[RMDB]
RNA sequence: GGGAACGACUCGAGUAGAGUCGAAAAGAGAGGGUAACCACCGGCGCGCGUCACUGAUAUAUCCACCGGGGGGUAAGGGGAGAAAAGGAUACAGUGCGACGAAGUUAGCACGCUGCCCCGUAAGGCUUGAAGAGUGUAGUGUUCGCACUACACUCAACAAGUCUAACAAGUUCGCUUGUUAGACUUGAAAAGAAACAACAACAACAAC
Reactivity to DMS in 0.01 (KOAc 150mM, MgCl2 10mM, bicine 150mM(pH8.5), 24C), signal-to-noise 2, nucleotides 027 to 156: g010a100g000a120g010g000g020u010a060a100c020c040a080c030c030g050g030c020g020c070g020c040g000u000c060a140c070u030g000a180u010a120u000a110u000c050c040a070c030c010g020g010g000g000g010g020u000a060a050g010g010g050g000a070g000a060a090a100a070g020g000a120u010a030c020a070g050u010g010c010g000a170c090g010a030a100g030u000u010a110g000c000a030c010g000c020u010g010c010c000c000c010g010u020a020a050g010g000c060u010u000g000a090a180g000a030g010u000g030u000a000g000u000g000u020u020c280g020c010a000c010u010a010c000a010c010u000c020a010a110
Reactivity to 2A3 in 0.01 (KOAc 150mM, MgCl2 10mM, bicine 150mM(pH8.5), 24C), signal-to-noise 2, nucleotides 027 to 156: g100a010g010a020g000g000g030u130a100a040c040c030a040c030c050g000g000c010g000c000g000c010g070u070c020a010c050u050g050a040u070a030u060a060u190c030c050a060c040c090g030g000g000g020g000g010u090a090a070g050g020g040g000a040g060a030a100a030a040g010g000a000u050a060c040a020g020u000g050c020g030a020c030g000a050a020g060u060u050a030g050c050a010c050g020c010u070g010c000c000c000c000g010u050a010a040g040g000c040u090u100g070a150a120g010a050g020u000g000u010a010g000u000g020u020u010c130g000c020a000c000u000a000c000a000c000u000c000a000a000